The record gives the reactivity of an RNA of 207 nucleotides to DMS and 2A3. The reactions ran in a buffer of 150 mM KOAc, 10 mM MgCl2 and 150 mM bicine (pH 8.5), at 24 C. For 2A3 the reverse transcriptase was SuperScript II with manganese. DMS adducts were read by reverse transcription with MarathonRT. For DMS, 2,326 sequencing reads were counted. In probing experiments dimethyl sulfate is read out at A N1 and C N3, which are open when not base-paired.
RNA sequence: GGGAACGACUCGAGUAGAGUCGAAAAGUUUACGCUCCAAGAUCGGUGGAUAGCAGCCCUAUAAAUAUCUAGGAGAACUGUGCUAUGUUUAGAAGAUUAGGUAGUCUCUAAACAGAACAAUUUACCUCAUACGUUAGGACGUUCGCGUCCUAACGAAGAAACCGUUAUUCUUCGGAAUAACGGUUUCAAAAGAAACAACAACAACAAC
Reactivity to DMS in 0.01 (KOAc 150mM, MgCl2 10mM, bicine 150mM(pH8.5), 24C), signal-to-noise 2, nucleotides 027 to 156: g020u010u000u010a070c110g010c030u000c040c020a080a130g000a060u010c060g000g050u020g030g020a110u010a110g030c050a230g010c020c030c050u000a160u000a050a030a100u000a060u000c070u000a070g010g020a300g000a060a030c030u010g000u010g010c080u000a180u000g010u000u000u000a000g000a040a070g030a030u010u030a180g020g040u000a150g010u000c010u000c010u000a010a010a020c010a020g010a080a060c070a050a140u010u010u000a120c010c000u000c080a130u000a130c020g000u010u010a000g010g000a030c000g050u010u010c300g040c020g010u000c010c010u000a000a000c000g000a030a110
Reactivity to 2A3 in 0.01 (KOAc 150mM, MgCl2 10mM, bicine 150mM(pH8.5), 24C), signal-to-noise 5, nucleotides 027 to 156: g010u030u050u110a070c050g010c030u000c020c020a070a040g030a120u100c100g060g070u080g060g060a090u080a060g050c040a020g020c030c010c010u130a120u060a120a180a030u190a040u070c060u020a030g000g030a060g020a080a050c060u070g010u020g050c010u050a030u120g000u010u010u000a050g010a280a010g000a020u030u040a020g060g000u030a020g020u000c000u000c000u010a010a000a000c010a020g030a030a010c090a030a010u060u060u050a030c010c010u070c040a100u110a180c010g000u000u000a000g010g000a000c010g020u050u020c200g010c000g120u000c000c000u000a000a000c000g000a000a010